RNA sequence: GGGAACGACUCGAGUAGAGUCGAAAAAAAAAGGACCUACAGCCGAGCGAGUGACUGAAAACGGCAAAGUCACGAAGCAUGGUUAUACCUAAAUGGUCGUAGCGAAAUAAGAGUUGUUCCCAGUAAAUAUUAGUUCUAUGUUCGCAUAGAACUAAUAAAAAGAAACAACAACAACAAC
Reactivity to 2A3 in 0.01 (KOAc 150mM, MgCl2 10mM, bicine 150mM(pH8.5), 24C), signal-to-noise 3, nucleotides 027 to 126: a020a000a000a010a010g070g000a020c000c010u020a020c030a010g020c000c010g020a000g010c020g000a030g040u010g010a000c000u000g040a060a080a090a070c060g090g010c070a150a060a000g010u010c000a000c010g010a080a010g000c010a020u050g010g000u050u020a050u080a100c010c030u090a160a170a130u200g020g020u020c020g060u030a020g060c020g060a050a060a100u110a090a060g000a010g000u010u000g000u000u010c000c000c000a000g000u030a010a020a020
Reactivity to DMS in 0.01 (KOAc 150mM, MgCl2 10mM, bicine 150mM(pH8.5), 24C), signal-to-noise 4, nucleotides 027 to 126: a030a050a050a160a100g010g010a060c040c020u000a040c070a100g010c000c010g000a090g010c000g000a290g010u000g000a030c000u000g000a050a030a050a080c120g000g000c060a070a090a020g000u000c000a000c000g000a080a110g000c000a060u000g000g010u000u000a070u000a080c020c020u000a030a110a050u010g000g000u000c060g010u000a060g020c040g010a130a060a030u000a040a200g000a010g000u000u000g010u000u000c000c000c010a100g010u020a030a050a090

An RNA of 177 nucleotides, treated with 2A3 and DMS and read out base by base. DMS adducts were read by reverse transcription with MarathonRT. The DMS profile rests on 4,528 reads. Conditions: 150 mM KOAc, 10 mM MgCl2 and 150 mM bicine (pH 8.5), 24 C. For 2A3 the reverse transcriptase was SuperScript II with manganese. Values cover nucleotides 27 to 126.